[RMDB]
RNA sequence: GGGAACGACUCGAGUAGAGUCGAAAAAGAAUUGUACCACCACUGCGUAUCCUAAACGGGCUCUGCAGUGGUUAUUCUUGUAAAGUACUAGGAGUGAAUAGUGGGCCGUAUUGCAGGCAUUAACAUUAAAAGGCAAUCCACUUCGGUGGAUUGCCAAGUGAUAAGAGUAGUUCGCUACUCUUAUCACAAAAGAAACAACAACAACAAC
Reactivity to DMS in 0.01 (KOAc 150mM, MgCl2 10mM, bicine 150mM(pH8.5), 24C), signal-to-noise 2, nucleotides 027 to 156: a080g010a070a040u000u010g000u010a100c060c170a100c010c010a030c020u000g050c010g000u000a060u000c020c010u000a060a120a220c180g000g010g010c020u000c070u000g040c000a020g010u010g000g020u000u000a010u010u000c050u010u000g010u000a120a070a160g020u000a070c020u010a090g010g010a070g030u000g060a060a070u000a070g020u010g000g000g040c020c010g030u010a070u010u010g040c070a110g010g010c060a050u000u000a080a080c060a110u000u000a070a070a100a180g010g030c010a010a020u000c000c010a020c010u000u000c280g030g000u000g020g000a010u000u000g000c000c010a000a020
Reactivity to 2A3 in 0.01 (KOAc 150mM, MgCl2 10mM, bicine 150mM(pH8.5), 24C), signal-to-noise 2, nucleotides 027 to 156: a000g060a040a020u100u100g050u090a060c000c000a000c010c000a020c040u000g080c020g030u070a070u200c010c000u170a280a290a110c100g010g000g000c030u080c050u160g000c020a000g000u000g000g000u000u020a000u020u030c010u000u050g100u120a040a130a060g060u060a020c070u060a080g040g080a050g060u070g040a070a040u020a100g050u060g020g000g060c050c010g040u110a090u050u110g060c070a050g030g050c020a030u060u090a060a010c010a020u130u140a040a170a010a000g000g060c000a000a000u000c000c000a000c000u040u030c090g000g000u010g000g000a000u000u000g000c000c000a000a020
This 207-nucleotide RNA was probed chemically with DMS and 2A3. In probing experiments dimethyl sulfate is read out at A N1 and C N3, which are open when not base-paired. Source: RMDB library M2RFPK, as collected in RNAgym. For DMS the reverse transcriptase was MarathonRT. 2A3 adducts were read by reverse transcription with SuperScript II with manganese.